RNA sequence: GGGAACGACUCGAGUAGAGUCGAAAAUUCAAUUGUGGGAUACCAUCAAGGGUGUUUUUACCUUUGACUUAGGUACGACUUACAAAGGGAAUGAGGUUGUGACUAAAGCAGUUGGCGAAAGAAUUCCAUGACUCUGCAAGUUCGCUUGCAGAGUCAUAAAAGAAACAACAACAACAAC
Reactivity to DMS in 0.01 (KOAc 150mM, MgCl2 10mM, bicine 150mM(pH8.5), 24C), signal-to-noise 1, nucleotides 027 to 126: u110u000c030a130a120u000u020g010u010g000g030g000a300u000a020c000c000a170u000c010a000a000g010g020g000u000g000u000u050u080u130u080a020c000c000u000u000u000g030a000c290u000u000a000g000g000u030a000c250g030a140c000u000u050a000c020a020a070a200g050g000g000a040a010u000g000a120g040g020u000u000g000u000g040a090c040u000a020a000a170g040c030a150g020u040u000g000g010c140g000a130a070a050g000a000a040u030u000c070c040